Structure probing data (DMS and 2A3) for a 177-nucleotide construct. DMS adducts were read by reverse transcription with MarathonRT.
RNA sequence: GGGAACGACUCGAGUAGAGUCGAAAAGAGUCCUAUUUCGAUAGGACUCAACUAAAAUCAGCGGUAAAUAAUUAGCUGGCGUUACCGCUGAACCCCAGCAUACUAGCCUCGUCUUCGGACGAGGCAACCACUCUUAUAGCUUCGGCUAUAAGAGUGGAAAAGAAACAACAACAACAAC
Reactivity to DMS in 0.01 (KOAc 150mM, MgCl2 10mM, bicine 150mM(pH8.5), 24C), signal-to-noise 2, nucleotides 027 to 126: g020a000g010u010c000c000u010a010u000u000u020c180g020a010u010a010g000g010a030c010u000c000a000a040c170u000a080a100a080a080u010c000a010g030c000g010g000u000a000a020a020u000a120a090u020u000a110g000c090u000g010g000c160g000u000u000a010c010c010g010c010u000g000a000a070c140c000c000c130a190g000c220a060u000a080c180u000a080g000c000c000u000c000g000u000c010u010u000c210g000g020a000c010g010a010g010g000c000a000a020
Reactivity to 2A3 in 0.01 (KOAc 150mM, MgCl2 10mM, bicine 150mM(pH8.5), 24C), signal-to-noise 3, nucleotides 027 to 126: g010a000g000u000c000c000u000a010u020u080u050c130g110a010u010a010g000g030a000c000u000c000a000a000c000u080a010a000a030a180u020c000a000g000c000g030g000u050a040a050a100u130a140a200u230u210a060g110c080u070g040g000c020g040u010u000a000c000c010g050c010u000g010a010a020c020c010c000c010a010g040c020a070u190a230c050u140a100g020c000c010u010c000g010u010c000u030u060c230g050g000a000c010g010a000g000g000c010a000a000
For DMS, 1,162 sequencing reads were counted.